RNA sequence: GGGAACGACUCGAGUAGAGUCGAAAAGGUGAUUGUGAUACACCCUACCGCUAGUCGUCGAUUCUCAGUAUUAGACAGCUCCAAUCAUAGUACGUGACACGAUUAUUUAGCUGCCUAAUCCUUAACAUAACGGGUGAUAUGUUACAGUCACGUACUACGAUCGUUGUAAGUUCGCUUACAACGAUCGAAAAGAAACAACAACAACAAC
Reactivity to 2A3 in 0.01 (KOAc 150mM, MgCl2 10mM, bicine 150mM(pH8.5), 24C), signal-to-noise 2, nucleotides 027 to 156: g000g010u050g000a070u060u070g030u010g000a000u000a020c040a030c010c010c000u000a010c000c020g030c010u030a030g040u030c050g000u000c010g050a130u020u000c010u000c000a020g010u020a030u040u040a000g000a000c000a000g000c000u020c030c060a010a010u030c000a030u000a030g010u000a000c000g010u010g000a000c010a000c030g040a020u020u000a140u020u260u120a010g000c000u020g000c000c000u020a000a000u010c000c010u040u060a090a030c030a030u070a050a040c040g040g000g010u040g020a040u000a000u050g050u000u030a010c010a000g010u020c000a010c000g000u000a000c000u000a010
Reactivity to DMS in 0.01 (KOAc 150mM, MgCl2 10mM, bicine 150mM(pH8.5), 24C), signal-to-noise 2, nucleotides 027 to 156: g010g020u000g010a090u000u000g030u010g000a150u000a170c040a050c030c000c020u000a120c030c030g020c050u000a070g030u030c020g070u000c060g000a160u000u000c020u020c060a140g010u000a100u000u000a030g000a030c020a010g010c040u000c100c060a100a130u010c040a070u010a060g010u000a010c040g010u000g000a010c030a140c060g020a070u000u000a100u000u010u000a020g000c020u000g020c010c010u000a020a040u000c020c110u000u000a010a060c050a070u030a050a070c070g030g000g070u000g010a170u000a010u000g030u010u010a080c070a170g000u000c000a000c010g030u000a000c010u000a050
An RNA of 207 nucleotides, treated with 2A3 and DMS and read out base by base.
Conditions: 150 mM KOAc, 10 mM MgCl2 and 150 mM bicine (pH 8.5), 24 C.
The DMS profile rests on 2,858 reads.
It was measured as part of the RMDB library OK3TST.
For 2A3, 1,585 sequencing reads were counted.
2A3 adducts were read by reverse transcription with SuperScript II with manganese.
Reactivities are rounded to 0.1 and cut off at 0 and 3.